[RMDB]
Structure probing data (2A3) for a 207-nucleotide construct.
The reactions ran in a buffer of 150 mM KOAc, 10 mM MgCl2 and 150 mM bicine (pH 8.5), at 24 C.
RNA sequence: GGGAACGACUCGAGUAGAGUCGAAAACCCAUGUCUUCCAGCCUUGCCUCCCCCACAGGCUGCAGAUGACACCCUUCGCAGUGCUUAUUCUGGAGUGUAAGAGCUGAGAGCAGGAGCUACCUGGGGGUUGAGGGGUGGGCAGGCUUUAGAGAAGGGGAGUGAUAGUCAUUUUCGAAUGACUAUCACUAAAAGAAACAACAACAACAAC
Reactivity to 2A3 in 0.01 (KOAc 150mM, MgCl2 10mM, bicine 150mM(pH8.5), 24C), signal-to-noise 1, nucleotides 027 to 156: c000c000c000a010u070g090u030c030u040u030c050c020a010g000c000c000u220u300g020c010c000u050c000c000c000c000c000a020c020a010g000g060c000u010g020c030a010g000a000u050g000a010c020a140c020c000c000u030u010c000g050c000a020g000u090g120c020u080u060a070u150u060c110u260g150g000a160g070u100g060u060a030a010g020a000g030c020u010g100a070g030a000g130c030a010g000g020a030g070c030u050a070c010c050u030g050g050g040g050g010u000u120g010a050g050g010g000g010u100g060g010g000c050a000g090g000c000u050u090u120a040g010a000g030a010a010g020g010g000g070

For 2A3, 562 sequencing reads were counted. Source: RMDB library OK3TST, as collected in RNAgym.